RNA sequence: GGGAACGACUCGAGUAGAGUCGAAAAUGGUGUCCUUGACAAGGAGGUUCUGGAAGGAAAGAUACAGUGGUGCAAGGGUCCUGAAGCCUUCAAACAACAACUUGAUUCCUUUUUUUUGGAGGCUGCACUUCAUGGGCCCGAGUAUUAUGACUAUGUCCUCCAUAUACAAAUUCGUUUGUAUAUGGAGAAAAGAAACAACAACAACAAC
Reactivity to DMS in 0.01 (KOAc 150mM, MgCl2 10mM, bicine 150mM(pH8.5), 24C), signal-to-noise 3, nucleotides 027 to 156: u000g020g010u000g000u000c020c030u000u000g020a140c080a100a110g020g000a090g040g010u000u000c050u010g000g020a100a100g010g010a070a070a100g010a150u000a060c050a090g030u000g020g010u010g000c040a100a300g000g040g030u000c010c030u000g000a060a050g020c010c020u000u000c020a040a040a070c150a050a100c100a030a060c140u000u010g020a240u000u000c030c020u000u000u000u000u000u000u000u000g000g000a030g010g000c050u000g010c070a110c120u000u010c070a080u010g040g010g000c000c010c010g000a060g010u000a040u000u000a110u000g020a090c050u010a150u000g000u000c040
Reactivity to 2A3 in 0.01 (KOAc 150mM, MgCl2 10mM, bicine 150mM(pH8.5), 24C), signal-to-noise 6, nucleotides 027 to 156: u120g030g000u040g010u060c020c020u020u070g030a040c060a080a050g030g010a030g000g050u070u070c040u060g030g040a040a050g040g020a090a040a020g040a010u120a060c050a030g060u040g040g010u020g010c010a040a050g000g000g000u000c000c010u020g020a020a000g000c010c000u000u010c010a020a020a030c040a040a030c020a060a070c120u110u140g080a150u240u240c040c050u160u070u050u020u010u000u010u020g010g010a000g000g000c010u040g010c060a090c060u080u070c060a070u160g000g000g000c000c000c000g000a000g000u010a020u110u040a070u100g060a020c060u040a070u170g050u050c010
Record summary: The record gives the reactivity of an RNA of 207 nucleotides to DMS and 2A3. 2A3 adducts were read by reverse transcription with SuperScript II with manganese. For DMS, 13,473 sequencing reads were counted. DMS adducts were read by reverse transcription with MarathonRT.